[RMDB]
RNA sequence: GGGAACGACUCGAGUAGAGUCGAAAAGUUGCAUGUGCAAUAGACGCGCUGCAGCGUACUCUUCACCUCUGCAAUCUUAUGCCUGCUGGACUCAUUCCUGCGGUUAUGAUUAUGUCUACAACCCUUUGCCCACCCGCGUUCGCGCGGGUGAAAAGAAACAACAACAACAAC
Reactivity to DMS in 0.01 (KOAc 150mM, MgCl2 10mM, bicine 150mM(pH8.5), 24C), signal-to-noise 4, nucleotides 027 to 129: g010u000u000g040c020a070u000g040u000g000c120a000a000u020a110g000a100c100g010c040g000c150u130g050c150a080g010c030g030u010a140c020u010c040u030u020c040a020c050c010u000c020u060g020c080a080a110u020c060u040u030a090u040g020c020c010u030g050c070u040g040g000a030c140u050c000a030u030u020c010c010u040g050c100g100g040u000u030a070u000g030a060u040u020a000u040g000u010c000u030a040c100a100a120c020c010c050u000u000u000g040c100c020
Reactivity to 2A3 in 0.01 (KOAc 150mM, MgCl2 10mM, bicine 150mM(pH8.5), 24C), signal-to-noise 6, nucleotides 027 to 129: g010u000u000g000c020a020u240g040u010g000c020a020a100u100a090g040a090c040g010c000g020c100u180g020c050a070g000c000g020u110a220c010u000c000u020u020c020a020c000c000u010c010u020g050c000a020a060u060c020u060u120a070u160g010c000c010u040g000c050u070g000g010a010c050u060c120a090u210u030c000c000u030g010c040g000g010u000u090a040u090g070a060u030u100a050u150g060u020c030u020a020c010a040a050c010c000c000u020u060u080g000c000c000